[RMDB]
Structure probing data (2A3) for a 207-nucleotide construct. Source: RMDB library ARCHII, as collected in RNAgym. The 2A3 profile rests on 526 reads. Conditions: 150 mM KOAc, 10 mM MgCl2 and 150 mM bicine (pH 8.5), 24 C.
RNA sequence: GGGAACGACUCGAGUAGAGUCGAAAAGGGGAUGUUAUUGGCUUCGACGCCGAUGAUGAAGCUCAUAGAUGCAUGCCGAGAGCGCAUUUUCUCUCGUAAAUCAAAUUUGCAUAUUUUAGUCGCAAACGACGAAUCUUACGCUCUAGCUGCCUAAGGGGGGCGUAGCCCGGUUCGCCGGGCUACGCCCAAAAGAAACAACAACAACAAC
Reactivity to 2A3 in 0.01 (KOAc 150mM, MgCl2 10mM, bicine 150mM(pH8.5), 24C), signal-to-noise 1, nucleotides 027 to 156: g020g000g000g000a020u040g040u100u050a010u050u120g010g000c060u080u090c090g060a080c080g050c010c000g010a040u030g010a050u050g030a080a000g040c050u040c030a010u020a080g080a010u080g010c000a010u100g000c000c060g020a000g000a000g000c000g010c030a010u000u020u080u050c010u010c000u010c000g150u170a000a000a100u120c070a000a010a000u000u050u010g050c000a010u010a080u140u140u010u170a080g020u010c040g000c100a150a140a140c030g060a000c000g030a010a020u030c030u050u140a050c050g030c030u030c000u030a030g060c010u030g040c030c000u010a050a090g050g020g000